RNA sequence: GGGAACGACUCGAGUAGAGUCGAAAAGUCAAGGGUAUGUGAGUACCUGUUCUCCCCUGCCAGAAUCUCAAACGAGCUCUCUGUAAAAAUCACAAGAUUUUAUUGUGCAUGGUAGCAUGAGUCUGUAUCCCCGAUUGAUAUUCGUAUCAAUCGGGGAAAAAGAAACAACAACAACAAC
Reactivity to DMS in 0.01 (KOAc 150mM, MgCl2 10mM, bicine 150mM(pH8.5), 24C), signal-to-noise 4, nucleotides 027 to 126: g000u040c100a130a090g000g000g000u020a010u000g010u030g010a210g000u010a000c000c000u000g010u020u020c050u000c020c020c030c040u020g000c070c030a020g030a150a080u040c000u000c000a070a120a140c180g000a110g010c040u000c030u000c030u010g000u000a020a020a050a090a030u010c020a050c130a070a070g000a080u010u020u030u040a090u030u000g010u010g020c120a050u000g010g020u030a070g000c040a040u000g000a080g020u000c010u000g000u060a260
Reactivity to 2A3 in 0.01 (KOAc 150mM, MgCl2 10mM, bicine 150mM(pH8.5), 24C), signal-to-noise 3, nucleotides 027 to 126: g080u040c080a010a100g050g000g000u050a010u090g170u120g050a060g040u020a010c020c020u040g010u030u020c050u030c010c000c010c000u000g000c010c020a040g030a120a160u080c030u000c030a060a150a090c080g020a030g020c000u000c010u000c000u000g020u040a090a100a050a010a000u040c000a020c020a100a060g000a070u020u060u130u120a100u050u190g000u010g000c030a020u070g010g040u050a000g000c020a010u040g010a020g050u000c010u070g040u040a070
The data come from the RNA Mapping Database (RMDB), libraries RFM100 and RFMREP.
The record gives the reactivity of an RNA of 177 nucleotides to DMS and 2A3.
The RNA was probed in 150 mM KOAc, 10 mM MgCl2 and 150 mM bicine (pH 8.5) at 24 C.
The 2A3 profile rests on 1,360 reads.